[RMDB]
RNA sequence: GGGAACGACUCGAGUAGAGUCGAAAAACAUAGUAGGUGCUAUUCAAUGAGUGUAGGCUGAAUAAAUGAAUGAAUGAAUGACAAAACUGGGGUAGGCAUGGCAGAUUUACUCCCUCCUCAUUCUAAGGAGAAAGUAGAGCCUCUAACAGGCUGAGAGUCGUUGAUAAGGUUUCGACCUUAUCAACGAAAAAGAAACAACAACAACAAC
Reactivity to DMS in 0.01 (KOAc 150mM, MgCl2 10mM, bicine 150mM(pH8.5), 24C), signal-to-noise 2, nucleotides 027 to 156: a070c050a070u010a120g020u000a100g040g050u000g030c010u000a090u000u010c070a080a130u020g000a120g030u000g000u010a110g040g040c070u010g010a080a090u000a050a080a140u010g020a110a050u010g020a080a070u010g020a110a100u000g000a150c060a040a030a060a080c110u000g030g000g040g000u000a120g000g020c040a110u010g000g000c070a080g000a200u000u000u000a040c030u000c000c010c010u000c010c000u000c050a140u000u010c210u000a020a020g020g000a040g010a030a030a040g010u000a060g000a080g020c020c000u000c070u000a050a080c130a030g000g010c020u000g000a110g000a130g020
Reactivity to 2A3 in 0.01 (KOAc 150mM, MgCl2 10mM, bicine 150mM(pH8.5), 24C), signal-to-noise 3, nucleotides 027 to 156: a000c020a030u150a040g060u030a040g060g020u020g030c020u050a040u120u130c080a140a090u140g030a040g050u080g040u070a040g030g050c040u060g060a060a020u110a110a060a060u100g080a040a020u030g040a020a030u050g040a040a070u120g030a030c030a050a080a050a010c050u050g000g000g000g030u030a020g040g000c020a000u020g040g000c020a010g020a050u050u030u090a050c010u020c020c040c000u010c000c010u040c010a090u160u070c010u050a030a040g020g010a020g030a060a060a010g020u030a010g000a030g000c020c000u000c010u010a090a120c070a030g020g000c010u030g010a030g000a010g070
Chemical mapping of a 207-nucleotide RNA with DMS and 2A3.
The reactions ran in a buffer of 150 mM KOAc, 10 mM MgCl2 and 150 mM bicine (pH 8.5), at 24 C.
For DMS the reverse transcriptase was MarathonRT.
The DMS profile rests on 3,738 reads.
For 2A3, 2,225 sequencing reads were counted.